[RMDB]
RNA sequence: GGGAACGACUCGAGUAGAGUCGAAAAAGCAUUUAGCCUGAUUACUCUUUAAAUCAAAUCAGGCAAUAGAGAGAAACUCGAGAGGUGAAAACCACACAGCAUUCUGAAAUGUAUUUGGGAGUAAUCUAUGACUAUUGGGUCUUCGGACCCAAUAGAACAUGAUUGAAAGAUUCGUCUUUCAAUCAUGAAAAGAAACAACAACAACAAC
Reactivity to DMS in 0.01 (KOAc 150mM, MgCl2 10mM, bicine 150mM(pH8.5), 24C), signal-to-noise 2, nucleotides 027 to 156: a110g020c040a090u020u000u000a130g010c010c030u020g010a050u010u000a070c040u000c040u010u000u010a020a090a130u000c050a070a090a220u000c000a040g010g010c050a040a020u000a080g000a140g000a200g000a200a170a110c040u020c040g010a090g020a130g020g040u000g000a110a070a120a090c030c010a120c070a080c050a040g030c030a070u000u000c060u010g010a070a080a120u000g010u000a050u000u000u010g010g020g020a090g000u010a030a020u010c010u000a040u000g000a130c000u000a000u010u010g020g010g010u000c000u000u010c300g050g030a000c000c000c000a020a000u000a000g000a040a170
Chemical mapping of a 207-nucleotide RNA with DMS. The RNA was probed in 150 mM KOAc, 10 mM MgCl2 and 150 mM bicine (pH 8.5) at 24 C. Values are in units of 0.01, from 0 to 300, in steps of 10.